[RMDB]
RNA sequence: GGGAACGACUCGAGUAGAGUCGAAAAUUCGAUCCGGACCGGCUCAUCUCGGCAAGAGGCGGCAGUCCUCAGUGCUCUUACUCUUUCCUAUAAAGAGGAGACUGCUGGACUCGCCGCCCGAGCCCGACAAACUCUGGAUUCGUCCAGAGUAAAAGAAACAACAACAACAAC
Reactivity to DMS in 0.01 (KOAc 150mM, MgCl2 10mM, bicine 150mM(pH8.5), 24C), signal-to-noise 9, nucleotides 027 to 129: u010u010c050g020a080u000c050c030g000g030a050c100c020g000g000c040u010c010a110u030c040u000c000g010g010c060a090a080g010a120g000g020c000g020g020c020a020g000u020c000c000u040c000a000g000u050g080c000u010c010u040u080a300c010u020c020u000u010u000c200c190u050a100u090a040a000a000g000a030g000g000a030g020a040c010u030g030c140u020g000g000a000c000u000c150g030c030c010g000c000c000c000g000a090g020c040c010c020g000a070c190a080a100
Reactivity to 2A3 in 0.01 (KOAc 150mM, MgCl2 10mM, bicine 150mM(pH8.5), 24C), signal-to-noise 9, nucleotides 027 to 129: u050u030c030g030a040u030c020c040g020g020a020c010c010g020g000c010u020c020a100u030c030u010c020g010g010c020a050a040g100a130g040g010c000g000g000c000a000g000u010c000c000u010c010a050g000u140g250c020u010c010u070u200a290c010u020c000u020u040u070c060c090u170a180u220a290a030a000g010a000g020g000a000g000a000c000u010g050c050u010g000g000a000c000u020c070g000c000c000g000c000c000c000g000a000g000c000c000c010g020a010c050a020a170
Source: RMDB library 15KLIB, as collected in RNAgym. An RNA of 170 nucleotides, treated with DMS and 2A3 and read out base by base. Reactivities are given for positions 27 through 129. High DMS reactivity at an A or C suggests that its Watson-Crick edge is free.